Structure probing data (DMS and 2A3) for a 207-nucleotide construct. Reactivities are given for positions 27 through 156. Conditions: 150 mM KOAc, 10 mM MgCl2 and 150 mM bicine (pH 8.5), 24 C. For DMS, 5,415 sequencing reads were counted.

[RMDB]
RNA sequence: GGGAACGACUCGAGUAGAGUCGAAAACCGGAAUGGUUCCGCCGUGAUCGGGCCAUGCAAUAGUUGCCAACGACAACUAUGCUCCGGUUGCUCAGGCAGCGUAACGCUGCUUGAAAGACCACUUGAAUUAGCGCGACAUUGUUCGCAAUGUCGCGAACAUUUUACGGGUGUUCGCACCCGUAAAAUGAAAAGAAACAACAACAACAAC
Reactivity to DMS in 0.01 (KOAc 150mM, MgCl2 10mM, bicine 150mM(pH8.5), 24C), signal-to-noise 3, nucleotides 027 to 156: c010c000g000g010a080a070u010g000g000u000u010c020c000g000c090c150g000u000g010a060u010c020g020g030g070c000c010a040u000g010c090a130a060u000a010g000u010u010g010c000c030a190a190c250g010a080c010a010a050c010u010a010u000g010c100u000c010c030g020g030u000u000g020c130u000c000a050g010g000c000a060g000c000g010u000a130a120c190g020c000u000g000c000u000u000g000a010a110a140g000a160c020c010a060c060u010u010g010a120a200u010u000a100g040c010g000c000g010a050c010a000u000u000g010u020u010c300g030c030a000a010u000g000u000c000g050c010g010a010a050
Reactivity to 2A3 in 0.01 (KOAc 150mM, MgCl2 10mM, bicine 150mM(pH8.5), 24C), signal-to-noise 5, nucleotides 027 to 156: c000c000g000g030a100a090u090g000g030u300u300c020c030g030c060c090g170u210g050a210u140c030g000g000g000c010c000a010u050g000c010a070a300u010a010g000u000u000g000c020c090a160a070c180g070a120c000a000a000c030u000a000u020g000c020u010c020c000g000g000u010u030g010c010u000c000a000g010g000c010a000g000c000g030u140a090a070c290g000c010u000g010c000u000u010g000a010a000a000g010a010c000c010a040c100u050u100g050a100a070u120u090a110g080c000g000c000g000a000c000a000u010u010g040u050u100c140g000c080a000a000u000g000u010c000g000c000g000a010a000